[RMDB]
RNA sequence: GGGAACGACUCGAGUAGAGUCGAAAAGCAAAGAUCGAAAGAUCAAACGGUAGAAAAGAUGGUUUGAAAACCUCGCGUUCUACCAAGUGAAUAUCACAAUAGGCGAAAGUACGAAAGUACAAAAAAAGAAUAAUCAUCGAUUCGUCGAUGAUUAUUCAAAAGAAACAACAACAACAAC
Reactivity to 2A3 in 0.01 (KOAc 150mM, MgCl2 10mM, bicine 150mM(pH8.5), 24C), signal-to-noise 2, nucleotides 027 to 126: g080c040a050a040a070g010a020u000c000g040a090a030a020g000a000u000c000a000a080a000c050g010g000u000a000g000a000a030a010a010g050a070u270g000g080u040u100u200g180a180a180a020a000c000c000u000c010g050c060g040u010u000c000u000a000c000c000a020a000g000u000g030a110a050u170a080u250c020a000c030a110a110u060a130g130g020c040g060a100a090a030g010u020a000c000g020a070a050a020g000u040a010c000a000a050a040a000a020a000a060
Reactivity to DMS in 0.01 (KOAc 150mM, MgCl2 10mM, bicine 150mM(pH8.5), 24C), signal-to-noise 3, nucleotides 027 to 126: g010c040a090a090a160g010a020u000c000g000a120a090a130g010a000u000c010a080a140a110c130g000g010u000a000g000a000a030a060a110g000a050u010g000g000u010u000u000g010a220a120a090a030c000c000u000c040g000c200g000u000u000c000u010a000c000c000a070a080g010u000g010a120a080u020a080u010c020a050c060a090a080u010a050g000g000c020g000a050a120a100g010u000a000c040g000a060a040a150g020u020a010c020a000a000a030a040a060a180a120
The data come from the RNA Mapping Database (RMDB), library M2PK90. The record gives the reactivity of an RNA of 177 nucleotides to 2A3 and DMS. For 2A3 the reverse transcriptase was SuperScript II with manganese. DMS adducts were read by reverse transcription with MarathonRT.